[RMDB]
RNA sequence: GGGAACGACUCGAGUAGAGUCGAAAAAAUGCAGAGAGUUUGGGGAUGCGCCUCUUAACCCUUUAAAGUGUUUUCUACAAAGUGCUAUGAUCAAUUUGUAGUUGAGGCUGUAAUAAUCCAGAUAUGUAUACACAUACAUGUGUGCAUACAUAUGUAAGUCACUACGACUAUUCGUAGUCGUAGUGACAAAAGAAACAACAACAACAAC
Reactivity to 2A3 in 0.01 (KOAc 150mM, MgCl2 10mM, bicine 150mM(pH8.5), 24C), signal-to-noise 3, nucleotides 027 to 156: a000a000u080g020c040a000g010a000g010a020g050u050u110u090g010g000g010g010a010u040g070c020g010c010c000u000c000u070u050a060a070c030c070c000u040u120u150a100a120a020g020u020g030u050u060u090u040c020u000a000c000a010a020a000g050u060g080c060u170a150u300g060a130u190c020a030a050u040u000u030g020u000a030g020u040u050g020a000g010g000c010u010g020u020a070a170u070a020a030u030c070c020a010g000a080u010a000u000g000u000a000u000a020c000a010c000a030u220a110c120a130u300g020u020g000u000g000c040a000u000a000c000a020u000a010u040g030u030a120a030
Reactivity to DMS in 0.01 (KOAc 150mM, MgCl2 10mM, bicine 150mM(pH8.5), 24C), signal-to-noise 2, nucleotides 027 to 156: a030a080u000g000c020a190g010a050g010a110g000u000u000u030g020g000g040g000a140u000g030c160g020c020c010u000c020u010u020a040a060c020c030c010u010u000u000a060a080a110g020u020g000u010u000u000u010c040u000a030c000a020a030a020g000u010g020c090u000a120u000g030a170u000c040a050a030u000u010u010g020u000a030g060u000u010g000a150g010g010c000u000g030u010a050a060u010a110a140u000c050c040a250g020a080u000a000u000g010u000a010u000a000c010a020c000a030u000a110c300a120u010g010u000g030u000g000c000a020u000a000c000a010u000a000u000g040u000a070a210
This 207-nucleotide RNA was probed chemically with 2A3 and DMS.
DMS adducts were read by reverse transcription with MarathonRT.
The DMS profile rests on 4,222 reads.